[RMDB]
RNA sequence: GGGAACGACUCGAGUAGAGUCGAAAAUGAUCGAGAGAUCUAAGUAUGUACGCGAGUCAAGUGCACAGACUCGAGCGAAAGCUCGGUCGAAAGACCGCGUACAUGUGACGGCAAGUGUACAGUCGAAGGGUGCAUCACUGUUCGCAGUGAUGCACCCAAAAGAAACAACAACAACAAC
Reactivity to DMS in 0.01 (KOAc 150mM, MgCl2 10mM, bicine 150mM(pH8.5), 24C), signal-to-noise 1, nucleotides 027 to 126: u010g000a010u000c000g000a180g020a160g030a010u010c000u020a100a260g000u000a020u000g010u000a010c000g000c000g010a040g000u060c000a070a020g060u010g000c000a000c030a300g010a000c000u010c000g010a000g000c010g010a090a070a100g020c000u000c000g020g000u000c000g000a050a050a120g000a010c000c020g030c000g010u000a000c000a000u000g030u000g000a090c030g000g000c050a040a080g010u000g050u000a020c010a300g000u000c060g020a100a160
Background: Source: RMDB library OK2TRN, as collected in RNAgym. Structure probing data (DMS) for a 177-nucleotide construct. Reactivities are given for positions 27 through 126. For DMS the reverse transcriptase was MarathonRT. The DMS profile rests on 1,028 reads. The RNA was probed in 150 mM KOAc, 10 mM MgCl2 and 150 mM bicine (pH 8.5) at 24 C.